The record gives the reactivity of an RNA of 177 nucleotides to DMS and 2A3.
RNA sequence: GGGAACGACUCGAGUAGAGUCGAAAAGUGAGCCAUUGAACCAACGUUCAAUUCGUUGAUUUCAACACCACCUUCAACCGCGCGAAGGGCAUCUUGAGGGGUUUGGAAAAGAAUAAGUGCGUGUGUGACCCAGUAUACUAUUCGUAGUAUACUGGGUAAAAGAAACAACAACAACAAC
Reactivity to DMS in 0.01 (KOAc 150mM, MgCl2 10mM, bicine 150mM(pH8.5), 24C), signal-to-noise 9, nucleotides 027 to 126: g010u010g000a070g010c020c050a110u010u000g010a020a030c250c040a040a050c080g000u010u030c230a110a140u040u020c040g000u010u000g000a090u010u010u000c010a040a050c130a060c050c080a140c020c030u000u010c060a080a060c100c030g010c050g020c040g010a050a040g000g000g000c040a040u010c040u010u000g010a100g000g010g000g000u010u000u010g000g010a070a040a060a080g000a060a070u020a040a060g030u010g010c040g010u020g010u020g010u000g000
Reactivity to 2A3 in 0.01 (KOAc 150mM, MgCl2 10mM, bicine 150mM(pH8.5), 24C), signal-to-noise 9, nucleotides 027 to 126: g110u080g030a020g050c040c040a060u030u050g010a020a010c030c020a030a020c050g030u080u060c100a070a080u110u070c020g000u010u030g050a220u030u050u050c020a030a010c020a010c040c010a060c000c020u040u080c050a080a070c070c020g020c000g010c020g080a050a080g020g010g000c010a050u030c000u070u090g030a080g000g030g020g020u030u070u100g100g040a060a090a040a050g110a050a080u180a190a020g050u030g050c030g010u050g000u010g040u050g070
The reactions ran in a buffer of 150 mM KOAc, 10 mM MgCl2 and 150 mM bicine (pH 8.5), at 24 C. For DMS, 37,535 sequencing reads were counted. Source: RMDB library OK1LIB, as collected in RNAgym. DMS adducts were read by reverse transcription with MarathonRT. In probing experiments dimethyl sulfate is read out at A N1 and C N3, which are open when not base-paired.